[RMDB]
RNA sequence: GGGAACGACUCGAGUAGAGUCGAAAAAUCCGCACGCCAACAUGGACUGCGAUGGCAUCUACAUCGUGGAUGUGCAGAUCUGGCAGGACUCCGGUGAUGCGCGCACGUGGGAGACGCGCCGCCGAAGCGACCUACUACUUUUCGAAGUAGUAGGUCGAAAAGAAACAACAACAACAAC
Reactivity to 2A3 in 0.01 (KOAc 150mM, MgCl2 10mM, bicine 150mM(pH8.5), 24C), signal-to-noise 6, nucleotides 027 to 126: a000u020c020c000g060c020a080c070g010c020c000a070a050c050a290u210g040g040a030c010u010g000c010g120a120u070g130g010c020a050u010c020u080a050c020a230u140c190g030u030g050g010a030u070g050u100g020c000a000g020a180u010c050u080g020g000c020a040g060g060a040c020u030c030c020g010g000u020g000a100u180g000c000g000c000g010c010a040c080g130u280g110g100g020a180g020a040c000g000c000g020c000c000g000c000c000g000a010a010g040
Reactivity to DMS in 0.01 (KOAc 150mM, MgCl2 10mM, bicine 150mM(pH8.5), 24C), signal-to-noise 4, nucleotides 027 to 126: a090u000c010c020g020c110a110c090g020c000c000a160a120c150a100u020g020g010a140c060u000g020c010g000a110u010g020g000c050a060u000c070u000a060c000a090u020c180g010u000g010g000a030u000g010u000g010c030a030g010a100u010c040u010g010g000c030a140g010g000a220c010u000c030c010g000g010u000g010a160u010g010c020g000c000g010c090a070c060g000u010g000g000g010a210g010a140c010g000c010g000c000c030g030c010c000g000a000a020g010